[RMDB]
RNA sequence: GGGAACGACUCGAGUAGAGUCGAAAACAUUUUCUUGAAUAUUUUGGUCAUUCUCCUAGAUCGAUUGCAAAAGAAACCCCUGGUGGUCGAAACCAUGACCAAAGUAUAAGGUGGGGUUUUGUGCAUCAGUGAUGUAUAAGUUCGCUUAUACAUCACUAAAAGAAACAACAACAACAAC
Reactivity to DMS in 0.01 (KOAc 150mM, MgCl2 10mM, bicine 150mM(pH8.5), 24C), signal-to-noise 5, nucleotides 027 to 126: c110a070u000u010u010u010c060u010u000g000a100a110u000a040u000u000u010u010g000g000u000c020a080u000u010c080u000c060c110u000a080g000a110u000c040g010a020u000u010g020c020a030a090a120a190g000a040a040a050c010c000c000c000u010g020g020u000g000g020u000c050g000a060a110a090c220c140a060u000g010a020c010c000a020a030a090g000u000a060u010a080a080g020g020u010g010g020g010g010u000u000u010u000g010u000g010c070a040u010c090
Reactivity to 2A3 in 0.01 (KOAc 150mM, MgCl2 10mM, bicine 150mM(pH8.5), 24C), signal-to-noise 5, nucleotides 027 to 126: c020a020u120u080u110u100c050u080u110g060a120a070u090a150u120u110u070u060g010g020u010c020a040u130u000c090u010c080c040u060a050g010a100u030c030g030a020u040u130g000c010a060a050a090a180g050a080a060a040c010c010c000c010u050g130g020u020g010g030u030c000g020a120a070a090c060c020a050u100g010a020c000c000a000a020a000g110u130a160u050a180a050g140g040u080g020g000g000g040u000u010u020u030g030u010g000c000a030u090c050